[RMDB]
RNA sequence: GGGAACGACUCGAGUAGAGUCGAAAAUAACCACGUAAGCAUUAUACAGUGAUAUAUAUUAACAUGGUAACAAACUCGUAUAAUAGCGAUGUACAAGAGUGUCCGUGUACAUACGUACUUACGUGUACGGGCAUAAAUAUUUCGAUAUUUAUGCCCGAAAAGAAACAACAACAACAAC
Reactivity to 2A3 in 0.01 (KOAc 150mM, MgCl2 10mM, bicine 150mM(pH8.5), 24C), signal-to-noise 6, nucleotides 027 to 126: u080a010a040c030c000a000c010g000u000a010a000g030c020a020u030u030a010u010a020c020a010g010u000g040a020u030a020u030a020u010a040u290u140a150a070c060a140u200g130g010u110a120a020c030a060a120a020c030u040c100g000u010a010u000a030a030u030a020g030c030g020a000u010g000u010a000c010a010a070g070a050g140u170g130u050c050c020g050u010g000u010a000c010a000u030a140c010g020u030a070c010u010u010a000c010g000u010g000u030a050
Reactivity to DMS in 0.01 (KOAc 150mM, MgCl2 10mM, bicine 150mM(pH8.5), 24C), signal-to-noise 5, nucleotides 027 to 126: u020a100a160c280c010a010c000g020u000a010a010g020c300a040u000u000a000u000a020c020a020g010u000g010a110u000a100u000a060u000a130u000u010a100a160c130a080u000g010g010u000a060a070c170a080a160a050c010u000c160g030u000a010u000a010a020u010a150g010c030g000a040u000g000u000a010c000a040a080g000a160g000u010g020u010c060c030g020u000g020u000a010c010a010u000a070c010g020u000a130c030u000u000a000c010g010u000g000u000a100